Chemical mapping of a 177-nucleotide RNA with 2A3 and DMS. DMS adducts were read by reverse transcription with MarathonRT.

[RMDB]
RNA sequence: GGGAACGACUCGAGUAGAGUCGAAAAGAUAUGGAUCGGUACAGGCUGAUGACCUCGGAAACGAGCAAGGCCGUAUGACGAUCCUAAGUCAAAUCGCUAUCCACCCGUUCGCGGGUGGAUAGCGAAACACAAUCAGUAGGUUCGCCUACUGAUUGUGAAAAGAAACAACAACAACAAC
Reactivity to 2A3 in 0.01 (KOAc 150mM, MgCl2 10mM, bicine 150mM(pH8.5), 24C), signal-to-noise 4, nucleotides 027 to 126: g030a000u080a030u190g000g000a010u010c010g010g030u060a050c140a280g010g000c010u020g040a300u170g050a180c030c000u000c010g020g030a080a070a060c010g000a010g010c010a050a110g000g020c000c000g010u010a010u020g160a080c000g000a000u000c000c000u010a100a010g040u010c030a000a030a200u040c000g000c000u010a000u000c000c000a010c000c010c020g020u070u070c300g010c020g140g010g020u000g000g000a000u000a010g000c000g000a000a000a000
Reactivity to DMS in 0.01 (KOAc 150mM, MgCl2 10mM, bicine 150mM(pH8.5), 24C), signal-to-noise 5, nucleotides 027 to 126: g000a040u010a300u000g010g000a010u010c000g020g010u010a030c020a120g050g000c000u000g000a100u010g000a110c300c010u000c000g020g000a100a120a150c010g000a010g010c040a080a130g000g010c000c010g000u000a010u000g020a160c000g000a020u000c000c000u000a030a100g010u010c040a060a110a100u000c000g010c000u000a000u000c010c010a000c000c000c000g030u000u010c230g010c030g040g000g020u000g000g000a000u000a000g000c010g000a000a030a100
2A3 is a SHAPE reagent: it acylates the 2'-hydroxyl of flexible nucleotides of all four kinds. DMS (dimethyl sulfate) methylates the pairing face of unpaired adenines and cytosines. For 2A3 the reverse transcriptase was SuperScript II with manganese. The data come from the RNA Mapping Database (RMDB), library TTRDEL.